Structure probing data (DMS and 2A3) for a 207-nucleotide construct. DMS adducts were read by reverse transcription with MarathonRT. For 2A3 the reverse transcriptase was SuperScript II with manganese. Values cover nucleotides 27 to 156.
[RMDB]
RNA sequence: GGGAACGACUCGAGUAGAGUCGAAAACAGCCAGAUGUGCUUGUGCAGGGCACCAUAAGGCCCUCUGUGGACAGCUGGAGACCAAUGAAAGUGUCCCCGCAAACAUGGAUUGAGCAGCCACUCCGUGCCAGGCACCAGGCUAGCUACUGGGGCACAACCGUUUUAGUAAUUUCGAUUACUAAAACGGAAAAGAAACAACAACAACAAC
Reactivity to DMS in 0.01 (KOAc 150mM, MgCl2 10mM, bicine 150mM(pH8.5), 24C), signal-to-noise 1, nucleotides 027 to 156: c060a220g000c000c050a090g010a080u000g000u000g040c100u010u020g040u000g000c060a030g000g080g090c000a140c050c120a100u030a100a190g000g020c050c000c010u000c040u000g020u020g000g000a080c050a150g000c000u040g060g020a100g000a200c050c010a100a120u000g030a050a100a130g020u000g040u010c010c000c000c060g000c050a110a090a090c060a110u000g010g000a120u000u000g010a100g030c020a050g040c020c000a110c120u040c020c050g020u000g020c000c040a140g020g030c010a020c010c000a090g010g010c030u000a060g000c030u010a000c030u010g000g000g000g000c000a060c010a020a200
Reactivity to 2A3 in 0.01 (KOAc 150mM, MgCl2 10mM, bicine 150mM(pH8.5), 24C), signal-to-noise 4, nucleotides 027 to 156: c080a010g040c000c000a010g000a040u040g030u110g080c020u150u140g060u070g140c110a020g000g020g000c030a110c070c050a180u140a250a160g050g020c010c000c010u000c020u030g110u060g000g100a030c020a020g010c020u030g020g000a080g060a030c000c030a070a120u180g100a130a060a060g050u040g060u130c000c020c010c020g040c070a100a140a090c060a110u130g060g020a170u100u170g010a020g040c040a000g000c010c010a100c080u040c050c020g010u040g020c030c070a120g030g100c010a010c010c020a010g000g030c020u000a040g010c000u070a080c010u050g000g020g000g030c030a000c010a020a020
The reactions ran in a buffer of 150 mM KOAc, 10 mM MgCl2 and 150 mM bicine (pH 8.5), at 24 C.